[RMDB]
RNA sequence: GGGAACGACUCGAGUAGAGUCGAAAAAAAUUCGGGGUUGGCCUUGGCUAAACUGACCCACCCACAAUUUAUCCAAAAAAUUUAUCCACCUAACCCCAGAUCACUGCAAACGAAAUGUAUAUCACUACAACUAUGCAAUGUUCGCAUUGCAUAGUUGAAAAGAAACAACAACAACAAC
Reactivity to 2A3 in 0.01 (KOAc 150mM, MgCl2 10mM, bicine 150mM(pH8.5), 24C), signal-to-noise 1, nucleotides 027 to 126: a000a020a050u120u050c050g000g050g000g020u000u020g010g000c020c020u000u050g060g000c060u060a020a070a070c040u040g070a100c020c030c010a030c010c030c010a080c030a070a020u000u080u080a060u030c000c000a070a110a030a000a010a100u080u210u110a110u050c050c030a030c010c030u040a030a080c000c000c000c040a000g000a000u000c000a020c020u000g010c010a060a080a050c070g160a140a090a050u020g060u010a050u010a000u160c030a020c080u100a060
Reactivity to DMS in 0.01 (KOAc 150mM, MgCl2 10mM, bicine 150mM(pH8.5), 24C), signal-to-noise 1, nucleotides 027 to 126: a030a090a060u020u010c100g030g000g000g050u000u000g010g020c130c020u000u000g020g000c050u000a000a120a030c030u010g020a090c060c020c050a000c020c040c020a090c150a050a060u000u000u000a040u000c010c060a000a020a080a100a050a060u000u000u000a020u000c070c040a040c070c010u000a080a100c070c010c030c050a110g010a070u020c050a040c040u000g060c050a010a060a130c140g000a010a050a050u000g000u000a030u000a070u010c040a040c170u030a100
Description
The record gives the reactivity of an RNA of 177 nucleotides to 2A3 and DMS. Conditions: 150 mM KOAc, 10 mM MgCl2 and 150 mM bicine (pH 8.5), 24 C.